[RMDB]
RNA sequence: GGGAACGACUCGAGUAGAGUCGAAAAGUGUAGCGUCACUUUGAUGGCGGUACUAUGAAUUGAUGCAAGGUGUGGAGCGACCUUAUACAGUUCUGGUGGUGCUCUGAAUGGAGUGCUCUACUGAGAUUUAACUUAUGCACGUUCGCGUGCAUAAGAAGUUCCACAGUCGGUUCGCCGACUGUGGAACAAAAGAAACAACAACAACAAC
Reactivity to 2A3 in 0.01 (KOAc 150mM, MgCl2 10mM, bicine 150mM(pH8.5), 24C), signal-to-noise 1, nucleotides 027 to 156: g150u120g010u020a040g030c010g020u010c020a040c050u120u240u190g280a300u050g010g000c000g000g030u060a010c010u010a070u050g020a010a010u110u030g000a000u010g130c090a060a020g010g010u010g000u000g040g000a050g020c000g010a020c000c000u070u090a070u000a030c010a040g000u000u000c000u000g030g000u020g000g030u020g000c010u000c020u150g110a080a090u180g000g020a000g000u090g000c010u000c010u090a030c010u040g090a060g020a220u080u120u190a060a020c000u040u000a000u000g010c000a040c020g010u030u040c060g060c000g040u000g000c000a000u000a000a000g000a000a000

Notes: The data come from the RNA Mapping Database (RMDB), library M2RFPK. Chemical mapping of a 207-nucleotide RNA with 2A3. The reactions ran in a buffer of 150 mM KOAc, 10 mM MgCl2 and 150 mM bicine (pH 8.5), at 24 C.